[RMDB]
Structure probing data (2A3 and DMS) for a 177-nucleotide construct.
High 2A3 reactivity points to a flexible backbone, as in loops and unpaired stretches.
The RNA was probed in 150 mM KOAc, 10 mM MgCl2 and 150 mM bicine (pH 8.5) at 24 C.
High DMS reactivity at an A or C suggests that its Watson-Crick edge is free.
RNA sequence: GGGAACGACUCGAGUAGAGUCGAAAAUGGACCUAGCCAUCGAAUGGCUGGUGCUCAGAAUACUAUCUAGAAAGCCGGCUAAUCGACAGAAGGCCACAGAAGGUGAUGUGGCCGCAGUAGUGAGGCAGGUAUGCCGGAAUUUCGAUUCCGGCAUACCAAAAGAAACAACAACAACAAC
Reactivity to 2A3 in 0.01 (KOAc 150mM, MgCl2 10mM, bicine 150mM(pH8.5), 24C), signal-to-noise 1, nucleotides 027 to 126: u070g050g030a000c010c030u030a010g000c010c010a070u020c080g040a090a100u040g000g000c000u000g000g000u020g010c010u010c110a020g030a000a060u160a300c160u170a200u250c030u060a140g040a080a020a020g000c010c010g000g000c000u030a060a020u050c050g020a000c000a020g220a170a090g040g000c040c000a000c020a000g300a180a130g210g300u300g050a100u050g000u010g060g000c050c020g000c000a020g020u120a070g010u000g130a090g000g000c000a000
Reactivity to DMS in 0.01 (KOAc 150mM, MgCl2 10mM, bicine 150mM(pH8.5), 24C), signal-to-noise 1, nucleotides 027 to 126: u000g000g000a100c030c000u000a080g000c010c000a130u010c100g000a100a290u000g020g010c000u000g000g000u000g000c300u000c000a050g000a120a160u000a120c210u010a110u010c030u010a150g000a040a060a300g020c030c000g010g010c010u000a030a060u000c040g020a010c150a100g020a200a170g000g000c000c000a010c000a040g040a190a130g010g000u000g020a300u050g010u000g000g010c000c000g030c110a060g000u000a040g010u000g000a120g010g000c070a050